The record gives the reactivity of an RNA of 177 nucleotides to DMS. For DMS, 715 sequencing reads were counted.
[RMDB]
RNA sequence: GGGAACGACUCGAGUAGAGUCGAAAAAGAGCUCUUGCAGCGUUUGCAGUGGGCACAAGUGGUGGCACAUAACCUUGACGUUUCCGCUGGCUCCGUACAUGUCGACACGGGAGUUCCUUUCAUGUACGGUACCAUGCCUCUUCGGAGGCAUGGUACCAAAAGAAACAACAACAACAAC
Reactivity to DMS in 0.01 (KOAc 150mM, MgCl2 10mM, bicine 150mM(pH8.5), 24C), signal-to-noise 1, nucleotides 027 to 126: a110g000a100g020c010u000c020u000u000g000c050a120g000c100g010u000u010u000g040c040a090g010u000g000g020g020c030a050c140a060a050g060u000g030g010u000g030g070c090a070c090a060u010a050a120c080c060u000u010g020a160c030g010u000u000u000c030c030g010c180u010g040g030c100u000c010c050g010u010a050c030a040u030g030u010c030g000a060c090a140c130g000g000g000a300g000u010u010c000c050u000u000u000c020a050u000g000u000a000c130
Conditions: 150 mM KOAc, 10 mM MgCl2 and 150 mM bicine (pH 8.5), 24 C. High DMS reactivity at an A or C suggests that its Watson-Crick edge is free.